Conditions: 150 mM KOAc, 10 mM MgCl2 and 150 mM bicine (pH 8.5), 24 C.
Structure probing data (2A3 and DMS) for a 177-nucleotide construct.
Values are in units of 0.01, from 0 to 300, in steps of 10.
Source: RMDB library TTRDES, as collected in RNAgym.
For DMS, 9,291 sequencing reads were counted.

[RMDB]
RNA sequence: GGGAACGACUCGAGUAGAGUCGAAAAGAUAUGGACGGCUACAGCUUUUGACGCUUAGUGAUCGGAAACGAUCAUGGGAGCGAUAAGCUGGUCCGUCCUAAGUCAAACACAAGGUUCGCCUUGUGAACUUAAGCUCUUAGUUCGCUAAGAGCUUAAGAAAAGAAACAACAACAACAAC
Reactivity to 2A3 in 0.01 (KOAc 150mM, MgCl2 10mM, bicine 150mM(pH8.5), 24C), signal-to-noise 5, nucleotides 027 to 126: g020a020u060a020u150g010g000a000c010g030g000c090u300a300c160a010g000c030u020u130u200u300g300a140c060g000c000u010u020a000g000u010g020a000u000c000g010g030a030a050a030c030g020a010u010c010a010u050g200g300g040a000g000c000g060a050u040a100a010g020c010u010g000g030u030c000c010g000u000c000c000u000a020a000g000u000c030a080a080a030c000a000c010a020a010g030g000u070u090c230g160c070c000u000u000g000u010g030a030a010
Reactivity to DMS in 0.01 (KOAc 150mM, MgCl2 10mM, bicine 150mM(pH8.5), 24C), signal-to-noise 7, nucleotides 027 to 126: g010a040u000a300u000g000g010a000c010g010g000c110u000a280c020a010g010c000u000u000u010u010g030a210c040g000c010u000u000a300g010u000g010a010u000c000g020g000a110a100a220c010g020a010u000c000a010u000g000g000g000a010g010c000g020a130u000a000a020g010c000u000g000g010u010c010c000g000u000c000c000u000a010a080g000u000c030a150a120a230c010a010c000a010a010g010g020u000u020c300g020c000c000u000u000g020u000g000a070a170